[RMDB]
RNA sequence: GGGAACGACUCGAGUAGAGUCGAAAAUAUCGUGCUGUGGCUGGGACUGGCGCUGGCUUGUCUUGGUCUUGCCAUGGUGCUCUGGCUGCUGGUCUUGCAGAACGUACCGGUAGGCAUUGCUUACCCAAUUUUAAUUUAGUUUCGACUAAAUUAAAAUAAAAGAAACAACAACAACAAC
Reactivity to DMS in 0.01 (KOAc 150mM, MgCl2 10mM, bicine 150mM(pH8.5), 24C), signal-to-noise 8, nucleotides 027 to 126: u010a040u010c050g020u000g010c020u000g010u000g010g000c030u000g010g010g010a040c020u000g000g010c020g020c250u010g010g010c040u000u000g010u000c010u000u000g010g010u000c050u000u010g000c090c020a060u010g010g010u000g000c030u000c040u000g010g010c020u000g010c020u000g000g000u000c050u000u000g010c170a090g010a080a090c180g010u010a040c040c030g010g010u000a020g000g010c020a080u000u000g000c020u010u000a120c010c000c080a070
Reactivity to 2A3 in 0.01 (KOAc 150mM, MgCl2 10mM, bicine 150mM(pH8.5), 24C), signal-to-noise 3, nucleotides 027 to 126: u120a020u040c030g000u010g030c020u050g040u090g070g020c020u040g030g000g030a030c010u030g030g000c030g030c190u120g190g010c000u020u050g010u000c000u020u040g020g000u000c020u030u090g020c030c000a030u050g030g000u030g000c010u000c020u020g160g010c020u030g000c000u010g040g000u010c020u070u130g030c060a060g070a180a030c050g020u050a020c020c000g000g000u010a020g030g000c040a100u030u160g000c020u030u050a080c010c000c000a020